[RMDB]
RNA sequence: GGGAACGACUCGAGUAGAGUCGAAAAAGCGCAGUGCGGCUCAGUCCCGCUUGAGUGCGCCGAUCACAUCGAGCAGCGCGCGGCGCAGUUGCGCGACAUCGACCGUUUCGCGCGCGGCGUGCUCGGACGGAUCAUACCGCUUCGGCGGUAUGAUCCGAAAAGAAACAACAACAACAAC
Reactivity to DMS in 0.01 (KOAc 150mM, MgCl2 10mM, bicine 150mM(pH8.5), 24C), signal-to-noise 1, nucleotides 027 to 126: a050g000c030g030c030a070g010u000g000c050g080g000c040u020c150a140g010u000c160c010c010g020c090u020u000g010a040g030u000g010c000g000c020c040g000a120u000c090a090c110a240u000c070g010a040g050c000a100g000c000g000c000g020c000g000g000c050g000c000a070g010u000u030g000c070g020c150g000a100c130a120u040c020g020a050c060c070g000u000u020u000c000g020c000g020c010g010c000g000g030c110g020u000g010c010u000c020g000g000a300
Reactivity to 2A3 in 0.01 (KOAc 150mM, MgCl2 10mM, bicine 150mM(pH8.5), 24C), signal-to-noise 1, nucleotides 027 to 126: a030g050c030g000c070a010g050u040g120c000g050g000c040u080c230a070g080u160c040c040c000g000c080u070u100g050a020g110u090g000c000g000c050c010g020a030u140c020a030c040a190u150c070g000a000g000c090a020g120c020g000c040g020c000g000g030c010g000c020a040g070u080u140g070c090g000c070g050a050c040a130u150c030g020a080c030c020g000u060u140u070c020g000c000g000c000g000c000g100g070c090g060u070g010c020u050c020g000g030a000